[RMDB]
RNA sequence: GGGAACGACUCGAGUAGAGUCGAAAAGAGGACAUUUAAAGUUGCAGGACUUGAAUGCAAUUACCGGAAGAAGCAACCAACCGGCAUGGUUCAGCAUACAAUACACAUUUGAUUAGAAAUGCAGAGACGAAAUACGAAAGUUCGCUUUCGUAUUUCGAAAAGAAACAACAACAACAAC
Reactivity to 2A3 in 0.01 (KOAc 150mM, MgCl2 10mM, bicine 150mM(pH8.5), 24C), signal-to-noise 3, nucleotides 027 to 126: g100a010g030g030a020c000a030u080u120u120a210a130a020g030u030u050g000c050a000g040g150a060c040u040u090g040a060a020u040g020c030a030a090u080u050a110c010c010g010g000a090a020g030a040a010g030c020a020a040c050c010a010a050c020c030g010g010c040a030u040g030g050u030u060c010a000g010c010a020u040a110c020a000a100u080a060c030a010c000a100u050u060u040g060a100u060u110a050g110a100a060a020u070g040c030a030g030a010g020a100
Reactivity to DMS in 0.01 (KOAc 150mM, MgCl2 10mM, bicine 150mM(pH8.5), 24C), signal-to-noise 4, nucleotides 027 to 126: g010a140g010g000a130c030a030u000u000u000a080a030a070g020u000u010g010c140a090g010g000a090c060u010u000g030a060a020u000g000c050a080a080u000u000a140c010c010g000g020a090a180g010a040a110g020c100a080a110c050c050a070a160c080c040g000g000c070a060u000g000g020u000u000c130a060g030c040a060u000a020c070a040a060u020a050c120a060c110a030u000u010u000g010a080u010u000a130g000a020a060a070u000g010c090a070g000a100g020a160
Record summary: This 177-nucleotide RNA was probed chemically with 2A3 and DMS. 2A3 adducts were read by reverse transcription with SuperScript II with manganese. DMS adducts were read by reverse transcription with MarathonRT. For 2A3, 2,712 sequencing reads were counted. Values cover nucleotides 27 to 126. Conditions: 150 mM KOAc, 10 mM MgCl2 and 150 mM bicine (pH 8.5), 24 C. The DMS profile rests on 2,804 reads.